[RMDB]
RNA sequence: GGGAACGACUCGAGUAGAGUCGAAAAGUUCCUAUUAACGUCAGCCUCUUUUGUACUCAUAAUGUGGCUUCGGAUGUUUGAUGGGCGUUGCUUCAGUGCGUACGGCUCAUGGUAGAUUAAUUAUUAGCUGCAUAAGUUAGUUCGCUAACUUAUGCAGAAAAGAAACAACAACAACAAC
Reactivity to 2A3 in 0.01 (KOAc 150mM, MgCl2 10mM, bicine 150mM(pH8.5), 24C), signal-to-noise 3, nucleotides 027 to 126: g010u040u000c010c020u020a100u050u150a050a030c030g000u000c030a000g020c000c030u060c030u060u080u130u110g090u140a130c050u070c170a070u070a120a040u150g000u020g000g000c000u040u050c070g120g000a040u020g070u060u110u200g090a030u020g010g020g010c010g030u020u020g000c010u070u110c120a250g300u040g080c020g040u030a020c020g090g010c020u000c020a010u020g070g030u050a080g000a180u120u140a100a040u020u140a090u110u130a050g050
Reactivity to DMS in 0.01 (KOAc 150mM, MgCl2 10mM, bicine 150mM(pH8.5), 24C), signal-to-noise 4, nucleotides 027 to 126: g000u000u000c000c000u010a060u000u010a030a050c050g010u000c050a090g000c000c010u000c020u000u000u010u000g020u010a130c220u000c100a030u010a050a030u000g000u000g010g000c010u000u000c140g010g010a040u000g010u000u010u000g010a050u000g000g010g020c030g000u000u000g000c020u000u010c250a100g020u000g010c020g010u000a020c030g030g020c010u000c030a030u000g010g010u000a080g000a140u010u010a050a070u010u010a130u010u010a080g010